Source information:
Structure probing data (DMS) for a 177-nucleotide construct. The reactions ran in a buffer of 150 mM KOAc, 10 mM MgCl2 and 150 mM bicine (pH 8.5), at 24 C. Reactivities are given for positions 27 through 126. The DMS profile rests on 1,278 reads.
RNA sequence: GGGAACGACUCGAGUAGAGUCGAAAAGUUGUGUUACUCUGACACAUUUAGCAAGUGACUCAAAAGGCUGCCAGUUUUGAGUGGGAUCCAGAACAGGAGAAGGUUCUGCAACAGGUCCAGGCUGCUGUAGUAGUCCUCGAUUCGUCGAGGACUACUAAAAAGAAACAACAACAACAAC
Reactivity to DMS in 0.01 (KOAc 150mM, MgCl2 10mM, bicine 150mM(pH8.5), 24C), signal-to-noise 2, nucleotides 027 to 126: g000u000u000g020u000g010u000u010a070c150u010c150u010g010a070c060a060c040a100u030u000u000a090g030c110a100a090g000u000g010a080c030u000c030a030a060a080a070g000g020c060u000g010c030c030a140g010u010u020u000u010g000a020g040u000g000g020g020a040u010c030c010a050g020a060a070c030a060g000g000a140g000a090a090g000g000u000u000c000u000g000c110a080a020c060a070g010g030u000c030c030a100g010g000c030u000g040c080u000g000